[RMDB]
RNA sequence: GGGAACGACUCGAGUAGAGUCGAAAAACGCUAUACCCCCUACUAGACUGGGAUCGCGAGGUAUACGUGCUGGGUAUAGAGUCCACAGCGCACACAUUUGGCGUCGGCAUAGCCUCUACGAGACCACCAGGUGUAUAGCGUUCGCGCUAUACACCUGAAAAGAAACAACAACAACAAC
Reactivity to 2A3 in 0.01 (KOAc 150mM, MgCl2 10mM, bicine 150mM(pH8.5), 24C), signal-to-noise 2, nucleotides 027 to 126: a000c040g000c050u060a050u120a150c000c000c010c000c010u100a070c000u000a070g130a150c060u090g010g040g000a010u070c010g010c000g030a010g000g040u060a030u030a240c080g030u020g010c020u030g050g000g010u050a100u030a120g120a050g130u050c020c030a110c110a040g000c020g050c000a040c000a010c010a280u110u130u280g090g000c050g000u040c020g030g000c000a020u110a050g030c000c000u070c000u020a110c060g020a000g040a050c000c000a010c000
Reactivity to DMS in 0.01 (KOAc 150mM, MgCl2 10mM, bicine 150mM(pH8.5), 24C), signal-to-noise 2, nucleotides 027 to 126: a020c090g020c030u000a060u000a070c000c020c000c050c060u020a060c100u000a150g000a130c190u010g000g000g000a080u000c040g040c300g000a050g020g010u000a120u000a040c110g040u020g040c020u000g000g000g040u000a300u010a020g000a100g000u000c030c010a090c120a120g000c040g070c010a060c090a060c130a250u000u010u010g000g030c040g000u000c050g020g000c030a040u010a110g000c000c040u010c020u000a030c060g000a030g000a270c030c000a070c230